The record gives the reactivity of an RNA of 177 nucleotides to DMS and 2A3.
Source: RMDB library OK2TST, as collected in RNAgym.
Reactivities are given for positions 27 through 126.
[RMDB]
RNA sequence: GGGAACGACUCGAGUAGAGUCGAAAACGUAGAUACAGUGUCUAAGCUGGUUUACGAUAAUAAGCUAAAAGCGGCGAAACCGAACUCAAGACAGUGUUACAAGACCAUUGUUAAUUUUGGUCCUGGACCUUCCGAUUAACUUCGGUUAAUCGGAAGGAAAAGAAACAACAACAACAAC
Reactivity to DMS in 0.01 (KOAc 150mM, MgCl2 10mM, bicine 150mM(pH8.5), 24C), signal-to-noise 2, nucleotides 027 to 126: c060g000u000a050g010a080u010a080c000a000g000u000g020u000c170u000a130a150g050c020u030g000g000u000u020u020a030c010g000a060u010a120a090u000a100a160g000c030u010a050a110a120a140g020c100g010g020c040g000a030a070a120c030c000g000a090a080c040u000c090a070a060g000a020c090a060g000u000g010u010u000a110c040a020a050g000a020c000c010a020u000u000g000u010u000a090a130u010u000u010u000g020g000u000c010c010u000g000g000a300
Reactivity to 2A3 in 0.01 (KOAc 150mM, MgCl2 10mM, bicine 150mM(pH8.5), 24C), signal-to-noise 1, nucleotides 027 to 126: c020g000u010a000g030a080u190a260c010a040g060u030g060u150c040u160a030a030g020c010u030g020g020u010u000u000a030c000g040a010u020a080a080u040a050a050g020c030u010a140a050a080a080g030c080g010g000c030g060a060a010a010c000c030g000a000a010c000u010c050a090a000g010a080c030a030g060u010g030u150u040a050c010a090a020g000a020c020c000a020u000u080g070u100u160a260a300u120u160u050u000g000g030u030c010c010u000g000g010a010